[RMDB]
RNA sequence: GGGAACGACUCGAGUAGAGUCGAAAAGAAAGAAAGAAAUUAGCUCGCCAGUUAGCGAGGUCUGUCCCCACACGACAGAUAAUCGGGUGCAACUCCCGCCCCUUUUCCGAGGGUUAUCGGAACCAAAAAAACUCAGGCAACUUCGGUUGCCUGAGAACUAGCAUUGACAGUUCGCUGUCAAUGCUAGAAAAGAAACAACAACAACAAC
Reactivity to 2A3 in 0.01 (KOAc 150mM, MgCl2 10mM, bicine 150mM(pH8.5), 24C), signal-to-noise 2, nucleotides 027 to 156: g040a020a060a000g070a070a050a030g080a060a150a050u160u070a060g020c000u000c000g000c020c040a150g170u130u130a030g020c000g010a000g000g020u040c000u010g000u000c000c000c080c010a040c020a000c060g010a010c010a000g020a010u080a040a070u090c000g000g000g020u030g030c020a000a000c010u020c010c000c000g030c010c000c000c000u150u160u050u000c000c000g000a000g010g010g030u080u030a010u010c000g000g000a000a000c020c000a060a110a020a010a020a010a040c010u000c000a000g000g000c000a010a010c000u000u100c190g080g000u020u000g020c000c000u000g000a000g000a000a010